[RMDB]
RNA sequence: GGGAACGACUCGAGUAGAGUCGAAAAGGGCCAUUUUUAAUGACCACCAUCUUAAUAGACCUGGUGUCUAUUGUGGCUCUGAUUUUAUUGACAUUGUCAGGCGGUUAGCAGUAUCACUGUUCCAGCCCUUAGCCGAAGAGUUCGCUCUUCGGCUAAGAAAAGAAACAACAACAACAAC
Reactivity to DMS in 0.01 (KOAc 150mM, MgCl2 10mM, bicine 150mM(pH8.5), 24C), signal-to-noise 1, nucleotides 027 to 126: g030g010g000c000c000a000u010u000u020u040u010a100a110u000g000a020c080c060a050c060c010a140u000c130u010u010a030a080u000a040g000a020c030c080u010g000g020u000g040u000c020u000a020u000u000g010u000g000g000c000u000c000u010g000a140u010u000u000u000a070u020u010g020a030c040a040u010u000g010u010c050a170g010g020c050g000g010u000u000a040g010c010a030g040u000a080u000c030a050c060u000g010u000u000c030c010a110g030c160c080
Reactivity to 2A3 in 0.01 (KOAc 150mM, MgCl2 10mM, bicine 150mM(pH8.5), 24C), signal-to-noise 1, nucleotides 027 to 126: g020g010g000c040c000a030u130u070u050u090u200a160a120u140g040a010c000c000a000c000c010a010u000c040u130u300a180a120u090a160g030a010c060c070u060g020g000u040g020u000c020u030a110u030u040g020u010g010g020c000u000c000u020g010a010u020u130u070u140a170u130u090g040a020c030a040u070u120g080u130c050a030g050g000c040g000g030u050u120a040g000c000a020g020u060a070u300c060a000c030u010g030u000u030c000c010a020g000c000c010
The record gives the reactivity of an RNA of 177 nucleotides to DMS and 2A3. For 2A3, 610 sequencing reads were counted. The RNA was probed in 150 mM KOAc, 10 mM MgCl2 and 150 mM bicine (pH 8.5) at 24 C. Reactivities are given for positions 27 through 126.